The data come from the RNA Mapping Database (RMDB), library OK3TST.
Chemical mapping of a 207-nucleotide RNA with 2A3 and DMS.
Values cover nucleotides 27 to 156.
The RNA was probed in 150 mM KOAc, 10 mM MgCl2 and 150 mM bicine (pH 8.5) at 24 C.

RNA sequence: GGGAACGACUCGAGUAGAGUCGAAAAGGUAUCCGACGGUAUCCGACGGUAUCCGACGGUAUCCGACGGUAUCCGACGGUAUCCGACGGUAUCCGACUAUAUCAGACGGUAUCAGACGAUAUACGACGAUAUCCGACGGUAUCAGACGGUCUGCGACGCGAAGGGAAAAUUUCGGUUUUCCCUUCGCAAAAGAAACAACAACAACAAC
Reactivity to 2A3 in 0.01 (KOAc 150mM, MgCl2 10mM, bicine 150mM(pH8.5), 24C), signal-to-noise 3, nucleotides 027 to 156: g030g000u040a040u080c000c010g000a010c010g000g000u020a040u070c000c010g020a020c020g050g030u170a150u110c020c010g000a000c000g040g030u130a100u120c020c010g010a010c000g040g000u040a060u090c000c000g000a010c020g010g000u040a040u040c010c020g010a000c000g000g000u000a010u020c010c000g010a010c040u040a020u010a010u120c010a040g050a070c010g050g010u080a070u180c010a020g030a080c060g010a020u010a000u020a130c080g040a010c030g000a040u000a020u050c040c010g000a010c000g030g000u000a000u020c010a050g050a130c050g010g050u080c040u070g000c040g020a000c120
Reactivity to DMS in 0.01 (KOAc 150mM, MgCl2 10mM, bicine 150mM(pH8.5), 24C), signal-to-noise 3, nucleotides 027 to 156: g020g020u000a000u010c020c020g010a300c230g040g000u000a010u000c010c010g010a260c070g010g030u010a050u000c000c030g000a270c130g010g020u000a050u000c030c010g020a250c170g000g020u000a030u000c000c010g020a300c100g000g080u000a020u000c010c000g010a300c190g000g000u000a010u000c010c020g010a200c040u000a020u000a000u000c050a080g020a200c110g010g020u010a300u000c040a070g010a240c120g000a020u000a040u010a140c030g000a300c210g010a020u000a020u000c030c000g010a300c130g000g000u010a010u000c020a080g000a090c000g000g030u010c080u000g000c000g020a160c100